[RMDB]
RNA sequence: GGGAACGACUCGAGUAGAGUCGAAAAGAUAUGGACGAAUGAGGCCCGAUAAGAUAAACCUACGUAACAUCAGUCGGAAACGACUGUGGUAGGUUUAUCUUUUGACGGGUGUAGUUCGUCCUAAGUCGCUAUUAUUGAACUUCGGUUCAAUAAUAGCAAAAGAAACAACAACAACAAC
Reactivity to DMS in 0.01 (KOAc 150mM, MgCl2 10mM, bicine 150mM(pH8.5), 24C), signal-to-noise 3, nucleotides 027 to 126: g000a080u010a300u010g000g020a020c000g000a030a010u000g000a300g000g010c020c000c000g010a140u000a040a010g000a000u000a010a010a010c000c010u000a010c010g020u010a110a140c150a030u000c020a000g000u000c000g000g000a150a130a220c000g000a010c000u000g050u000g010g010u010a000g000g000u000u000u000a000u000c000u000u000u000u010g030a180c120g000g000g010u000g010u000a220g010u000u000c000g010u000c000c000u000a010a080g000u000c100
Reactivity to 2A3 in 0.01 (KOAc 150mM, MgCl2 10mM, bicine 150mM(pH8.5), 24C), signal-to-noise 1, nucleotides 027 to 126: g040a020u220a090u290g030g000a010c000g010a020a010u040g010a090g120g160c020c050c010g040a070u050a090a010g010a020u010a010a020a000c000c000u030a020c030g130u080a170a060c090a270u300c000a020g000u000c000g030g000a120a040a040c010g000a010c010u000g010u040g000g000u000a010g000g000u000u000u000a000u000c000u000u010u000u020g000a000c000g010g010g000u210g010u020a000g000u020u010c010g000u000c000c000u020a000a000g010u000c090